An RNA of 207 nucleotides, treated with 2A3 and DMS and read out base by base. The DMS profile rests on 11,853 reads. For DMS the reverse transcriptase was MarathonRT. Values cover nucleotides 27 to 156. It was measured as part of the RMDB library OK3TST. As a SHAPE reagent, 2A3 marks flexible, mostly unpaired nucleotides at the ribose 2'-OH.
RNA sequence: GGGAACGACUCGAGUAGAGUCGAAAACGUGCCGAGCCUUCGUGCUGGGGACCUUGAGCGAAGCAUCCAUGGCCAUGCCGCCCAUCGCGUGCUGGCUAUGGUCCAUGGUCAUGGCCCCAUGGUUCAUGCCAGCCAUGCUGCCUUGGUUCAUGCCGCCAUCAGUAUCUUUGUUCGCAAAGAUACUGAUAAAAGAAACAACAACAACAAC
Reactivity to 2A3 in 0.01 (KOAc 150mM, MgCl2 10mM, bicine 150mM(pH8.5), 24C), signal-to-noise 9, nucleotides 027 to 156: c050g030u060g030c010c020g030a010g020c020c040u150u170c090g120u160g050c010u030g000g000g010g020a000c010c000u070u110g060a070g070c080g070a140a000g040c020a020u020c000c010a010u010g000g000c000c010a030u100g000c000c010g020c030c040c020a230u240c090g040c050g080u190g020c090u200g000g020c030u100a010u000g000g000u020c010c000a020u010g000g000u070c040a070u050g060g010c000c010c010c010a030u060g020g000u060u130c040a050u220g050c010c010a010g000c010c000a050u120g010c030u040g000c010c010u010u020g020g000u050u050c020a030u100g040c020c030g040c020c010
Reactivity to DMS in 0.01 (KOAc 150mM, MgCl2 10mM, bicine 150mM(pH8.5), 24C), signal-to-noise 3, nucleotides 027 to 156: c070g020u000g000c010c020g010a110g020c040c020u000u000c090g040u000g000c040u000g000g010g000g000a040c030c010u000u000g020a110g010c000g010a140a110g020c070a120u000c020c010a020u000g020g040c020c020a040u000g020c020c010g030c030c050c070a160u010c130g020c050g020u000g030c010u020g030g010c010u010a010u000g000g010u000c070c010a020u000g030g030u010c040a100u010g000g010c040c080c040c020a050u000g010g000u000u010c020a100u010g010c010c020a170g000c010c030a110u010g030c030u010g020c030c090u000u000g030g030u000u010c040a070u010g010c020c030g010c080c080